[RMDB]
This 177-nucleotide RNA was probed chemically with DMS and 2A3. For 2A3, 2,763 sequencing reads were counted. The RNA was probed in 150 mM KOAc, 10 mM MgCl2 and 150 mM bicine (pH 8.5) at 24 C. 2A3 adducts were read by reverse transcription with SuperScript II with manganese. For DMS, 862 sequencing reads were counted. It was measured as part of the RMDB library OK2TRN.
RNA sequence: GGGAACGACUCGAGUAGAGUCGAAAAGCCACUUACGGACACACCGUCUGACGUACAGUCUCACUCGCAUGACUAGUCAAAGUCAUGACUGUGAGCGAGUACGACUGAUGGUCAGUUCGUGUGUGGAGUGGAGGUGAGGAUUCGUCCUCACCUCCACAAAAGAAACAACAACAACAAC
Reactivity to DMS in 0.01 (KOAc 150mM, MgCl2 10mM, bicine 150mM(pH8.5), 24C), signal-to-noise 1, nucleotides 027 to 126: g030c010c000a000c020u010u000a080c020g000g040a010c040a170c220a030c010c000g030u010c000u000g010a080c020g000u010a000c010a180g000u000c020u000c040a000c010u000c300g000c000a030u000g000a010c010u030a110g010u020c300a120a080a020g020u000c030a010u000g010a060c060u010g010u010g000a030g020c080g010a070g050u000a000c000g000a080c050u000g000a050u000g000g010u000c150a240g000u000u030c000g030u000g000u000g020u000g000g010a110
Reactivity to 2A3 in 0.01 (KOAc 150mM, MgCl2 10mM, bicine 150mM(pH8.5), 24C), signal-to-noise 1, nucleotides 027 to 126: g050c010c000a020c020u070u120a020c020g040g000a010c010a000c000a000c090c010g000u000c000u020g040a050c000g010u020a000c000a020g100u060c000u010c000a030c000u060c070g030c010a000u020g010a010c000u020a040g180u150c030a210a200a010g020u000c010a050u020g040a150c020u030g000u010g000a010g010c000g020a010g000u010a000c000g010a030c020u020g010a030u010g010g040u010c010a020g000u000u010c010g010u020g000u020g010u030g000g030a090